About this RNA: An RNA of 207 nucleotides, treated with 2A3 and read out base by base. For 2A3 the reverse transcriptase was SuperScript II with manganese. Conditions: 150 mM KOAc, 10 mM MgCl2 and 150 mM bicine (pH 8.5), 24 C. For 2A3, 437 sequencing reads were counted. Values cover nucleotides 27 to 156. The data come from the RNA Mapping Database (RMDB), library OK3TST.
RNA sequence: GGGAACGACUCGAGUAGAGUCGAAAAGUUUGGUUCAAUCAUCACAUCACCAUAUAUCCAAAGCGUAUCACUGACCGUAAUGACACCAUUUUUAAGAUACUCAAGAGCAAUAUUGUAAUUCUCGCUACCUACUUUAUCGGAUCCGGUAUGAGUAGGUCCCGAUACCGAGGUUCGCCUCGGUAUCGGGAAAAGAAACAACAACAACAAC
Reactivity to 2A3 in 0.01 (KOAc 150mM, MgCl2 10mM, bicine 150mM(pH8.5), 24C), signal-to-noise 1, nucleotides 027 to 156: g080u030u010u040g040g020u030u100c050a070a090u070c040a010u050c040a010c010a080u010c000a040c010c130a080u080a020u040a040u190c110c250a080a120a030g000c070g000u050a050u020c000a030c010u070g080a080c150c000g090u090a080a000u030g070a010c000a000c050c000a070u050u060u000u040u110a090a000g010a000u120a070c020u000c070a000a120g000a000g030c040a070a150u060a100u100u000g060u060a000a050u140u040c030u070c010g030c010u040a090c030c000u070a020c020u060u000u000a010u080c060g170g040a190u070c230c000g010g000u010a060u130g100a030g010u000a000g010g020u000